The record gives the reactivity of an RNA of 207 nucleotides to DMS. The reactions ran in a buffer of 150 mM KOAc, 10 mM MgCl2 and 150 mM bicine (pH 8.5), at 24 C. DMS adducts were read by reverse transcription with MarathonRT.
[RMDB]
RNA sequence: GGGAACGACUCGAGUAGAGUCGAAAAUCCUAAGUCAUCAUUGAGAUGUCUAGGAUCUGGGUUAUGAGCGCACUCACAACAGCAUCAUCGGAAACGAUGAUGACAUGUGAAACGCUCAUAACCCAGAUCCUAGACAUCAAUGAUGUGAUGAUAUGGACAAUUCUUAAAAGUUCGCUUUUAAGAAUUGAAAAGAAACAACAACAACAAC
Reactivity to DMS in 0.01 (KOAc 150mM, MgCl2 10mM, bicine 150mM(pH8.5), 24C), signal-to-noise 1, nucleotides 027 to 156: u020c000c000u010a050a240g030u000c000a000u000c000a030u000u000g000a090g010a000u000g000u000c010u010a010g000g010a020u000c000u000g010g000g040u010u000a000u010g010a010g000c020g050c000a070c080u000c000a000c000a060a110c070a170g000c010a010u000c010a010u010c000g030g010a180a110a300c020g030a020u000g010a020u010g000a020c060a300u000g010u000g000a000a180a000c000g040c010u000c000a000u000a000a010c000c010c000a010g000a000u000c000c020u000a010g000a010c000a010u000c000a030a050u000g020a080u000g020u000g010a040u010g030a030u000a250u000g000g020a300